[RMDB]
RNA sequence: GGGAACGACUCGAGUAGAGUCGAAAAUGAGAAGUCGUCAGUAGUUCGACGUGAGCAGAAGCCCGCCUCGAUAUCCUAUGUGGACGAGGGCAUGCCCAAGACACACCUUAACCCUAGCGGGACGCAAGGAUCCUUUAAGGUUCGCCUUAAAGGAUCCAAAAGAAACAACAACAACAAC
Reactivity to 2A3 in 0.01 (KOAc 150mM, MgCl2 10mM, bicine 150mM(pH8.5), 24C), signal-to-noise 2, nucleotides 027 to 126: u240g000a060g040a180a000g050u040c000g000u000c000a050g060u100a010g040u120u090c030g010a010c010g040u020g020a030g010c060a060g030a300a030g060c000c020c010g060c030c000u020c010g040a060u040a080u180c040c030u060a040u270g300u150g070g000a050c000g010a050g000g020g000c010a030u060g010c000c000c000a030a000g090a000c040a010c000a010c050c000u030u080a050a070c000c000c000u030a030g020c020g030g020g020a030c020g000c050a010a110
Reactivity to DMS in 0.01 (KOAc 150mM, MgCl2 10mM, bicine 150mM(pH8.5), 24C), signal-to-noise 2, nucleotides 027 to 126: u010g010a060g010a150a130g010u000c010g000u010c030a080g010u000a070g000u010u000c020g000a020c100g010u000g020a060g010c020a120g000a210a170g050c020c010c030g000c010c020u020c040g000a120u000a040u000c120c000u000a080u010g040u000g000g000a070c030g000a100g000g020g040c040a050u010g000c000c000c020a050a120g000a070c030a020c050a060c070c040u010u020a040a110c040c030c000u010a080g010c140g000g000g000a080c120g000c150a090a110
Notes:
An RNA of 177 nucleotides, treated with 2A3 and DMS and read out base by base. DMS adducts were read by reverse transcription with MarathonRT. For DMS, 1,408 sequencing reads were counted. The RNA was probed in 150 mM KOAc, 10 mM MgCl2 and 150 mM bicine (pH 8.5) at 24 C. For 2A3 the reverse transcriptase was SuperScript II with manganese.